RNA sequence: GGGAACGACUCGAGUAGAGUCGAAAAGGGUAGGCUGUUUUCAGUCUACCCGAUGUGCCUGUUUUCAGGCACGGAUAUCAGCCAUCCGACAGCCGGGGAUGGCCUAUCUGCUGAGCAUUCUGUGUGGAUUGUGAGGCAGUUAGCAGACGCGGCGACACGACUAUUACUAGUUCGCUAGUAAUAGUCGAAAAGAAACAACAACAACAAC
Reactivity to 2A3 in 0.01 (KOAc 150mM, MgCl2 10mM, bicine 150mM(pH8.5), 24C), signal-to-noise 7, nucleotides 027 to 156: g000g000g000u010a010g000g000c010u020g080u170u110u230u300c030a000g000u000c000u000a000c000c000c000g000a010u020g000u000g000c000c000u060g080u120u120u100u300c030a000g000g000c000a000c010g000g020a150u160a080u130c080a020g000c000c000a000u000c000c020g070a110c060a030g000c000c000g000g000g000g000a000u000g000g000c000c000u000a000u000c000u000g000c000u010g000a010g010c000a010u040u000c040u020g270u120g170u300g250g020a020u060u010g010u010g020a030g000g000c000a000g000u000u000a000g000c010a010g020a100c090g000c020g110g000c000g010a000c020a020
Reactivity to DMS in 0.01 (KOAc 150mM, MgCl2 10mM, bicine 150mM(pH8.5), 24C), signal-to-noise 4, nucleotides 027 to 156: g010g020g030u000a000g010g020c010u000g010u010u010u000u000c020a010g010u000c000u000a010c000c000c000g000a010u000g000u010g020c010c000u010g020u010u000u000u000c020a050g030g020c020a020c010g020g020a150u000a070u000c110a130g010c000c010a040u010c010c000g020a090c050a290g010c030c010g040g010g020g000a030u000g000g010c030c010u000a010u000c000u000g020c010u000g000a300g010c010a020u000u000c020u020g020u020g030u000g020g000a060u000u000g000u000g000a300g000g010c000a020g010u000u000a030g020c060a160g000a100c080g020c050g000g000c020g010a160c100a280
The record gives the reactivity of an RNA of 207 nucleotides to 2A3 and DMS.